[RMDB]
RNA sequence: GGGAACGACUCGAGUAGAGUCGAAAAAGUAGGCAGUUCGCUGCCUACUGAUUUGCAAGCCUGUUGGGUGUGAUUACGGCUUGUCAUAGUUACUCUGAUUGCAUUGCCUUUUCUUCGGAAAAGGCAAGCUAAUAUCAGCGUUCGCGCUGAUAUUAGCAAAAGAAACAACAACAACAAC
Reactivity to 2A3 in 0.01 (KOAc 150mM, MgCl2 10mM, bicine 150mM(pH8.5), 24C), signal-to-noise 3, nucleotides 027 to 126: a000g020u010a000g020g030c000a020g000u040u100c170g040c110u000g000c000c000u000a000c000u000g000a000u010u010u070g000c010a000a010g000c010c090u160g110u130u120g110g070g040u150g040u110g090a060u120u160a030c050g000g000c000u000u010g010u020c040a030u050a090g090u050u080a080c050u060c070u110g110a170u090u170g020c090a080u000u060g000c000c000u030u000u010u020c010u010u050c180g060g010a000a000a000a010g000g010c000a000a000
Reactivity to DMS in 0.01 (KOAc 150mM, MgCl2 10mM, bicine 150mM(pH8.5), 24C), signal-to-noise 5, nucleotides 027 to 126: a010g010u000a000g000g010c000a000g020u000u010c250g030c000u000g010c000c000u010a000c000u000g000a080u000u000u000g010c050a050a050g010c010c010u000g040u000u010g010g020g020u010g010u000g010a100u000u010a120c110g010g000c020u000u000g000u010c100a050u010a080g000u010u010a100c060u010c050u000g000a120u010u000g020c110a190u000u000g000c000c000u000u000u000u000c000u010u010c190g000g000a010a000a020a010g000g010c000a000a000